Overview
Structure probing data (2A3 and DMS) for a 207-nucleotide construct. Reactivities are rounded to 0.1 and cut off at 0 and 3. The RNA was probed in 150 mM KOAc, 10 mM MgCl2 and 150 mM bicine (pH 8.5) at 24 C. For 2A3 the reverse transcriptase was SuperScript II with manganese. For DMS, 4,412 sequencing reads were counted. Source: RMDB library M2RFOK, as collected in RNAgym.
RNA sequence: GGGAACGACUCGAGUAGAGUCGAAAAACAUGCUGGCCAACCCAACCCCACGAUCCUCCAUCGGCAUGAUCAUGAUGUGUUCUCAAAUAUCAGGCCAGUAAAUCACCAUGCUCGUGCUGGUAAAGGAAACUUAUGCCCAAGUUCGCUUGGGCAUAAACAAGUAGCUCAUAUUCGUAUGAGCUACUUGAAAAGAAACAACAACAACAAC
Reactivity to 2A3 in 0.01 (KOAc 150mM, MgCl2 10mM, bicine 150mM(pH8.5), 24C), signal-to-noise 4, nucleotides 027 to 156: a000c020a020u050g010c000u000g000g010c000c000a040a040c050c010c060a060a070c030c020c020c040a070c080g070a130u020c010c020u020c020c020a030u020c000g000g030c010a010u010g000a010u010c000a000u010g050a040u080g030u000g020u070u000c040u020c050a060a070a030u300a110u160c110a070g000g000c000c000a000g010u010a010a040a040u120c020a020c020c000a000u010g000c000u010c000g010u000g010c010u010g000g010u050a130a120a020g020g000a040a040a010c020u020u000a010u000g000c000c000c020a020a000g010u030u080c150g020c160u000u000g000g000g000c000a000u000a000a000a000
Reactivity to DMS in 0.01 (KOAc 150mM, MgCl2 10mM, bicine 150mM(pH8.5), 24C), signal-to-noise 2, nucleotides 027 to 156: a040c020a070u000g000c010u000g010g050c000c000a100a160c070c030c040a100a160c020c020c000c010a090c200g000a110u000c010c000u000c020c020a070u000c020g040g000c020a040u010g010a040u010c020a050u000g000a020u010g000u000g010u000u000c070u000c040a050a080a130u000a110u000c120a090g030g020c030c010a060g000u000a010a060a110u000c000a050c030c000a000u000g000c100u000c000g030u020g000c000u000g050g000u000a020a040a060g010g000a070a080a080c110u000u000a010u000g010c000c000c000a020a040g010u000u000c300g030c010u000u010g010g000g030c000a010u000a000a010a200